[RMDB]
This 207-nucleotide RNA was probed chemically with 2A3. High 2A3 reactivity points to a flexible backbone, as in loops and unpaired stretches. It was measured as part of the RMDB library M2RFPK. 2A3 adducts were read by reverse transcription with SuperScript II with manganese. The RNA was probed in 150 mM KOAc, 10 mM MgCl2 and 150 mM bicine (pH 8.5) at 24 C.

RNA sequence: GGGAACGACUCGAGUAGAGUCGAAAAGUUUACGCUCCAAGAUCGGUGGAUAGCAGCCCUAUCAAUAUCUAGGUGAACUGUGCUAUGUUUAGAAGAUUAGGUAGUCUCUAAACAGAACAAUUUACCUCAUACGUUAGGACGUUCGCGUCCUAACGAACUCAGUCCCAAGCUUCGGCUUGGGACUGAGAAAAGAAACAACAACAACAAC
Reactivity to 2A3 in 0.01 (KOAc 150mM, MgCl2 10mM, bicine 150mM(pH8.5), 24C), signal-to-noise 1, nucleotides 027 to 156: g000u030u060u090a010c060g000c000u000c000c000a070a000g040a200u130c140g080g050u050g000g080a080u080a130g030c060a020g020c010c000c000u090a080u140c140a120a010u080a020u220c070u100a030g180g000u000g050a000a010c010u020g010u010g050c050u080a030u110g000u000u010u000a060g000a200a000g000a000u100u000a140g120g180u070a070g020u000c010u050c000u000a030a000a000c000a010g020a000a030c030a010a010u080u000u000a020c020c010u030c050a140u060a140c010g000u000u000a020g000g030a030c000g020u060u010c130g030c020g140u000c010c000u010a000a000c000g010a000a000